[RMDB]
An RNA of 207 nucleotides, treated with 2A3 and DMS and read out base by base. The RNA was probed in 150 mM KOAc, 10 mM MgCl2 and 150 mM bicine (pH 8.5) at 24 C. DMS adducts were read by reverse transcription with MarathonRT. It was measured as part of the RMDB library OK3TST. The DMS profile rests on 3,977 reads.
RNA sequence: GGGAACGACUCGAGUAGAGUCGAAAACAACCUCUGCUUUUGAGUUGCUUGUCUUGACCCAUACCAUCAGCGGGUAACAAAGUAGGUUCAGAAAGACUGAUAUCUUCUCACCCACCCUGGGCAAGCAGAGACAAUCCUGUGGACUCUCAGAGCCAAGGGUAUUCAAAUUAUUCGUAAUUUGAAUACCAAAAGAAACAACAACAACAAC
Reactivity to 2A3 in 0.01 (KOAc 150mM, MgCl2 10mM, bicine 150mM(pH8.5), 24C), signal-to-noise 7, nucleotides 027 to 156: c020a010a060c000c010u010c010u010g020c020u060u090u140u190g040a050g020u060u030g030c030u060u050g070u110c030u090u150g130a240c010c020c040a090u140a110c050c050a070u150c040a060g070c080g040g030g000u030a040a040c030a090a090a030g020u060a030g060g000u030u030c020a020g150a120a180a050g080a160c010u020g030a020u030a050u240c010u050u030c020u020c020a040c000c020c000a050c040c050c040u060g000g010g010c020a010a000g000c010a010g010a000g030a060c020a010a080u080c010c020u110g030u100g090g030a160c010u020c010u030c130a070g010a010g070c020c020a030a040g100
Reactivity to DMS in 0.01 (KOAc 150mM, MgCl2 10mM, bicine 150mM(pH8.5), 24C), signal-to-noise 2, nucleotides 027 to 156: c060a120a190c070c000u010c000u020g030c020u000u000u010u010g010a210g010u000u000g000c020u000u010g030u010c020u000u020g020a180c010c010c040a300u000a090c050c090a090u000c050a100g000c070g010g000g010u000a040a080c070a120a070a060g000u010a080g030g010u000u000c040a040g010a080a060a080g000a100c030u000g000a090u000a300u000c010u000u040c020u000c040a030c020c030c020a050c000c000c020u000g010g010g020c020a030a120g020c010a030g000a050g030a080c040a060a110u000c010c010u000g000u000g000g000a070c040u000c020u010c040a140g010a070g000c000c010a070a240g010